This 177-nucleotide RNA was probed chemically with 2A3.
It was measured as part of the RMDB library OK2TRN.
The reactions ran in a buffer of 150 mM KOAc, 10 mM MgCl2 and 150 mM bicine (pH 8.5), at 24 C.
RNA sequence: GGGAACGACUCGAGUAGAGUCGAAAACAAUCAUACAAUUCACAACAUUAACGUAUUUAUCAAUCCCUUACUUGUGUAAGGAGUAUCUUAAUUGUAUGCAAUAUUGUUCUGGCCUUACACCAUAUAGGAACAUGCAGUGCUUCGGCACUGCAUGUUCAAAAGAAACAACAACAACAAC
Reactivity to 2A3 in 0.01 (KOAc 150mM, MgCl2 10mM, bicine 150mM(pH8.5), 24C), signal-to-noise 1, nucleotides 027 to 126: c000a000a030u060c000a040u000a040c000a000a040u050u040c160a040c010a150a290c070a150u080u170a240a000c200g000u060a220u110u300u030a210u170c100a070a040u100c010c000c000u000u090a050c090u240u300g110u090g020u300a000a020g000g000a010g010u010a160u010c120u060u140a090a050u000u060g000u000a010u010g020c010a000a160u100a110u200u000g050u000u010c000u100g080g020c000c010u050u020a000c090a000c050c010a000u050a010u010a180g000